[RMDB]
RNA sequence: GGGAACGACUCGAGUAGAGUCGAAAACUUUGAAGAGAUAUUCAUCACUAUGGCCGUCUCACCACUAUGAUUAUUUUCCUCAGUUAACAGGAGCAUAACUACAACUGUAAUAGUAUUGAAAGGAUGAACAGGCACUAUAUCUGACCCCACAUCACAGAGGAUGGCACGAAUUCGUUCGUGCCAUCCUAAAAGAAACAACAACAACAAC
Reactivity to DMS in 0.01 (KOAc 150mM, MgCl2 10mM, bicine 150mM(pH8.5), 24C), signal-to-noise 1, nucleotides 027 to 156: c040u000u000u030g040a110a070g000a070g060a000u000a070u000u000c130a050u010c120a090c040u010a010u000g010g010c000c040g000u000c090u000c030a040c050c020a070c040u010a070u020g000a100u000u000a120u000u000u000u000c070c040u000c060a030g040u000u010a080a180c080a050g010g000a100g050c090a040u000a050a060c120u000a060c020a050a040c060u000g000u000a060a070u000a020g040u000a120u000u000g000a080a040a070g070g020a060u010g070a080a110c070a030g000g000c080a070c090u000a090u000a010u000c070u010g010a200c040c010c000c010a020c040a180u020c090a070c040a170g000
Reactivity to 2A3 in 0.01 (KOAc 150mM, MgCl2 10mM, bicine 150mM(pH8.5), 24C), signal-to-noise 2, nucleotides 027 to 156: c050u040u040u170g030a080a030g040a030g040a050u050a030u200u100c050a060u110c020a050c090u110a070u060g020g020c020c010g080u020c010u000c070a000c020c010a060c040u130a030u090g020a070u070u020a030u070u180u020u020c000c020u050c060a050g030u030u070a120a000c040a070g080g000a030g040c030a040u030a080a050c030u110a060c040a080a060c030u020g000u030a040a040u050a080g070u040a090u120u060g080a150a100a020g060g000a060u060g000a020a050c010a060g000g030c050a020c030u010a020u000a010u170c010u030g060a090c010c000c000c000a010c000a000u080c040a020c060a050g010

The record gives the reactivity of an RNA of 207 nucleotides to DMS and 2A3. For DMS, 1,552 sequencing reads were counted. Values are in units of 0.01, from 0 to 300, in steps of 10. 2A3 adducts were read by reverse transcription with SuperScript II with manganese. DMS adducts were read by reverse transcription with MarathonRT. It was measured as part of the RMDB library OK3TST.